RNA sequence: GGGAACGACUCGAGUAGAGUCGAAAAAUCGUUAUAGCGAGAACUCAUACCGCACUUAUAUUUUUGAUGGGUAAGCCAACAACAUCCAGACGUGAUGUGUAUAGAACAUGUAGAGAUCACGCUACCCGUGUACGUGCAACUGGUAAUUAAAAUAAAAUCACAGGGUACAAUUCGUUGUACCCUGUGAAAAAGAAACAACAACAACAAC
Reactivity to 2A3 in 0.01 (KOAc 150mM, MgCl2 10mM, bicine 150mM(pH8.5), 24C), signal-to-noise 2, nucleotides 027 to 156: a000u000c000g000u000u020a100u080a170g040c000g010a040g030a220a120c000u000c030a040u070a070c040c040g030c000a010c010u070u030a060u030a110u160u080u020u130u210g210a140u100g020g000g040u050a070a000g030c010c010a030a010c010a050a000c000a080u040c030c010a030g140a190c070g170u160g020a040u000g020u000g030u010a020u030a260g050a080a050c070a050u060g010u030a040g060a000g000a250u100c050a030c080g020c000u000a000c000c000c000g000u050g000u020a040c040g010u020g000c070a120a080c040u020g000g000u050a050a050u170u120a070a030a060a080u180a030a060a000a000
Reactivity to DMS in 0.01 (KOAc 150mM, MgCl2 10mM, bicine 150mM(pH8.5), 24C), signal-to-noise 1, nucleotides 027 to 156: a030u000c050g010u000u020a140u000a240g000c020g060a160g010a110a080c020u010c060a160u000a110c030c090g040c080a050c000u000u000a070u000a050u010u000u000u000u010g030a120u000g020g010g000u000a070a110g020c070c030a100a120c060a020a060c030a040u010c010c000a110g000a040c090g000u010g000a020u000g010u000g020u000a080u000a060g000a120a070c230a070u040g060u010a110g010a100g010a100u010c020a040c000g000c060u000a040c000c010c000g010u000g060u020a030c070g070u010g000c020a100a100c040u000g020g000u000a030a110u020u010a170a080a010a120u070a000a090a140a080